[RMDB]
RNA sequence: GGGAACGACUCGAGUAGAGUCGAAAAUGUGGAGACUCAGAACUGGCCUUGUUUCCUAAGGAUUGUCUGGGGACCCCAGGGAGGCCCCCAAACCCAGCACAACUGGUCAGAACCAGCCAGGCUGUGGCUAGUUUAGAGAUUUCGAUCUCUAAACUAGAAAAGAAACAACAACAACAAC
Reactivity to 2A3 in 0.01 (KOAc 150mM, MgCl2 10mM, bicine 150mM(pH8.5), 24C), signal-to-noise 3, nucleotides 027 to 126: u150g040u110g040g020a050g010a060c010u010c040a030g040a240a130c080u120g130g030c020c010u040u050g050u060u240u110c030c060u040a000a020g030g020a110u080u130g010u020c020u020g000g000g050g100a110c000c020c020c010a020g030g030g020a060g040g050c020c010c010c000c000a010a020a080c000c000c010a010g020c040a020c010a040a060c000u010g010g010u060c060a040g030a120a090c000c000a000g010c010c010a020g070g000c020u010g020u030g030g010
Reactivity to DMS in 0.01 (KOAc 150mM, MgCl2 10mM, bicine 150mM(pH8.5), 24C), signal-to-noise 6, nucleotides 027 to 126: u010g020u000g020g010a090g000a300c030u000c010a010g000a070a080c100u000g020g020c010c020u000u000g000u000u010u000c160c090u000a060a050g000g000a130u010u010g000u000c010u000g000g010g000g010a170c100c040c010c030a080g000g000g010a130g000g010c030c020c010c010c050a050a060a170c010c010c010a060g010c020a050c150a100a160c010u000g000g010u000c160a170g000a120a150c020c030a070g010c020c030a170g000g000c050u000g010u010g010g000